RNA sequence: GGGAACGACUCGAGUAGAGUCGAAAACAGCCACCAGUUCGUAUUGUCGAUAGUGUCAAACACGGACUCGUUCGGGCACUCCAGCAGGGCAUCUAAAAGACGAGGAAGGUUGCGGUCCGUCGCCAUGCGGACGAUGAUCGUGUACAGAGGGAAGCUCAACAUAAGCCAUGUUCGCAUGGCUUAUGUUAAAAGAAACAACAACAACAAC
Reactivity to 2A3 in 0.01 (KOAc 150mM, MgCl2 10mM, bicine 150mM(pH8.5), 24C), signal-to-noise 2, nucleotides 027 to 156: c010a010g010c000c020a040c000c030a040g000u020u000c030g020u030a070u110u050g090u040c010g100a100u080a250g160u210g000u190c050a020a050a060c090a060c060g040g000a010c010u040c100g030u100u080c020g040g030g000c020a050c030u000c000c040a020g040c050a020g010g000g020c020a030u000c040u090a070a020a060a080g050a000c070g010a030g030g050a020a060g060g000u070u160g020c020g060g000u000c020c020g030u030c020g000c050c040a050u140g020c040g050g000a000c010g000a060u120g000a010u050c010g030u020g000u110a020c020a060g060a040g000g040g040a000a040g050c010u020c040
Reactivity to DMS in 0.01 (KOAc 150mM, MgCl2 10mM, bicine 150mM(pH8.5), 24C), signal-to-noise 2, nucleotides 027 to 156: c020a150g040c020c010a100c030c030a110g020u010u000c020g040u010a120u000u010g020u000c020g010a180u010a050g010u000g000u010c040a120a090a070c040a040c000g030g020a050c020u000c040g010u010u000c060g000g010g050c010a080c060u010c020c050a120g030c070a050g000g060g060c000a060u010c050u000a070a070a110a110g020a100c050g010a060g030g030a080a130g020g000u000u010g020c020g010g000u010c020c010g000u000c070g030c030c040a090u000g020c050g010g020a020c020g020a050u010g000a040u000c030g030u000g030u020a060c040a060g010a150g000g010g000a060a110g030c060u000c050